[RMDB]
RNA sequence: GGGAACGACUCGAGUAGAGUCGAAAAAAGCACAACGAUGACAAGCAGUGGAUGUGGGAGAGCGGCGCAGAUGGCAACUUCGCCGUCAGCGAGGACACUGGCGAGUCGAUUGGCAGGGGCACCGUCCCAUCUGACCACUAUUCGUAGUGGUCAGAUGAAAAGAAACAACAACAACAAC
Reactivity to 2A3 in 0.01 (KOAc 150mM, MgCl2 10mM, bicine 150mM(pH8.5), 24C), signal-to-noise 5, nucleotides 027 to 126: a000a000g120c100a080c060a100a020c040g060a040u120g040a030c020a040a060g030c020a020g040u020g050g050a130u080g030u110g070g030g040a090g000a000g010c030g020g000c010g000c030a020g020a080u040g020g010c020a070a100c130u150u110c100g010c010c010g010u010c010a000g010c000g030a070g050g030a010c030a000c040u060g070g030c020g000a020g040u060c020g030a090u010u050g050g000c040a020g030g020g000g000c010a010c040c030g030u050c000c010
Reactivity to DMS in 0.01 (KOAc 150mM, MgCl2 10mM, bicine 150mM(pH8.5), 24C), signal-to-noise 6, nucleotides 027 to 126: a060a050g010c070a040c060a060a070c080g010a100u000g000a080c090a090a120g010c060a050g010u000g010g010a070u010g030u010g010g000g010a110g000a080g020c060g010g010c030g020c040a050g000a040u000g000g020c040a120a100c210u000u010c090g010c030c010g020u000c030a070g020c030g010a090g010g000a120c070a070c040u000g000g000c020g010a140g010u000c030g000a070u010u000g000g000c040a060g010g000g000g010c060a080c070c050g000u000c030c050

This 177-nucleotide RNA was probed chemically with 2A3 and DMS. Reactivities are rounded to 0.1 and cut off at 0 and 3. The reactions ran in a buffer of 150 mM KOAc, 10 mM MgCl2 and 150 mM bicine (pH 8.5), at 24 C. For 2A3, 10,196 sequencing reads were counted.